[RMDB]
RNA sequence: GGGAACGACUCGAGUAGAGUCGAAAAAGCACAAUAUCGGUCGCAGUGAACCGCCGGUGGGCGUGGGCGAUCCCUGCGCCGGAUGCAACAAGCCCAUCCUGGACAAGUUCCUGCUGAAUGUCCUGGACUAUUCCAGGUGUUUCGACACCUGGAAUAGAAAAGAAACAACAACAACAAC
Reactivity to 2A3 in 0.01 (KOAc 150mM, MgCl2 10mM, bicine 150mM(pH8.5), 24C), signal-to-noise 3, nucleotides 027 to 126: a000g070c050a060c040a060a120u060a060u300c040g010g120u170c020g000c010a010g010u030g120a040a040c050c010g000c010c000g090g020u090g050g050g000c060g040u120g000g000g060c030g000a040u030c020c000c000u040g000c000g000c020c010g020g000a020u040g000c020a080a110c010a090a070g050c020c000c000a020u040c010c010u040g020g000a020c010a030a030g030u070u010c010c030u080g010c040u050g070a160a060u060g020u030c000c000u010g000g010a020
Reactivity to DMS in 0.01 (KOAc 150mM, MgCl2 10mM, bicine 150mM(pH8.5), 24C), signal-to-noise 3, nucleotides 027 to 126: a050g010c040a040c100a150a040u000a100u010c030g010g000u010c080g020c020a020g000u010g020a040a040c050c140g020c020c010g000g030u010g000g010g000c030g050u000g020g010g030c090g020a050u000c020c020c020u000g000c060g030c020c060g000g000a060u000g020c040a090a140c120a070a130g020c010c020c010a090u000c010c010u010g000g010a050c050a070a160g000u000u010c040c040u010g020c090u000g010a090a100u000g000u000c020c000u000g010g000a260
This 177-nucleotide RNA was probed chemically with 2A3 and DMS. Reactivities are given for positions 27 through 126. The reactions ran in a buffer of 150 mM KOAc, 10 mM MgCl2 and 150 mM bicine (pH 8.5), at 24 C. Reactivities are rounded to 0.1 and cut off at 0 and 3. The 2A3 profile rests on 6,346 reads. 2A3 adducts were read by reverse transcription with SuperScript II with manganese.